The record gives the reactivity of an RNA of 177 nucleotides to DMS and 2A3. Values cover nucleotides 27 to 126. The RNA was probed in 150 mM KOAc, 10 mM MgCl2 and 150 mM bicine (pH 8.5) at 24 C. High 2A3 reactivity points to a flexible backbone, as in loops and unpaired stretches.
RNA sequence: GGGAACGACUCGAGUAGAGUCGAAAAGAAGAAGAUUAUCUAUGUCUAAGACCUUGUUUCAAACUAACAAGGGCGCAUGGAGGAAGGCCGGACCUCCAUACUUAGACAAGCGCGAUCCGGCCCAGAAAGCGAUAUAGGUCUUCGGACCUAUAUCGCUAAAAGAAACAACAACAACAAC
Reactivity to DMS in 0.01 (KOAc 150mM, MgCl2 10mM, bicine 150mM(pH8.5), 24C), signal-to-noise 1, nucleotides 027 to 126: g000a050a100g000a070a130g000a170u000u060a000u040c070u000a250u000g000u000c000u000a010a010g000a160c000c000u010u000g000u080u020u000c270a250a000a250c270u000a110a050c000a000a000g050g010g000c200g010c260a040u000g030g000a000g000g010a000a060g000g000c000c000g160g000a140c000c000u010c000c000a040u000a000c000u000u000a010g000a000c000a000a000g130c300g020c190g000a300u000c000c030g000g000c000c000c120a030g000a030a000
Reactivity to 2A3 in 0.01 (KOAc 150mM, MgCl2 10mM, bicine 150mM(pH8.5), 24C), signal-to-noise 1, nucleotides 027 to 126: g110a020a020g170a000a050g010a130u200u110a110u110c120u000a060u000g000u000c000u000a000a000g000a000c000c000u000u000g120u000u010u000c230a300a230a110c190u030a000a000c000a000a000g000g030g030c050g000c020a000u070g000g000a000g000g000a120a000g000g010c000c020g000g000a060c000c000u000c000c000a000u010a000c000u010u030a000g000a000c020a020a000g030c100g040c180g020a000u030c000c000g000g000c000c000c000a000g060a000a240